[RMDB]
RNA sequence: GGGAACGACUCGAGUAGAGUCGAAAAAUUCAACUUCCAUUCAUGACAUUUAAAACUUUUCACUGAAUAAAAAUACAUUAAGCACUUUGGGAGGCUGAGACUGGUGGAUCACGAGGUCAGCAGAUUGAGACCAUCCUCGCUAACACAGUGAAACCCAAUCGACGUAUAGGUUCGCCUAUACGUCGAUAAAAGAAACAACAACAACAAC
Reactivity to 2A3 in 0.01 (KOAc 150mM, MgCl2 10mM, bicine 150mM(pH8.5), 24C), signal-to-noise 1, nucleotides 027 to 156: a000u100u060c020a020a020c020u050u000c000c000a060u070u070c020a010u070g090a130c030a110u100u140u170a170a150a030a070c040u140u120u040u050c030a050c050u000g010a220a000u180a100a160a010a010a000u170a020c030a000u090u180a100a000g070c080a020c010u030u060u000g000g000g000a010g000g130c020u010g070a020g050a020c070u120g020g070u000g000g140a050u050c020a000c080g020a000g070g070u050c030a020g040c010a020g030a110u060u100g050a070g020a030c010c040a030u030c000c000u020c000g040c070u020a010a000c000a010c000a070g030u010g010a010a040a060c000c000c050a000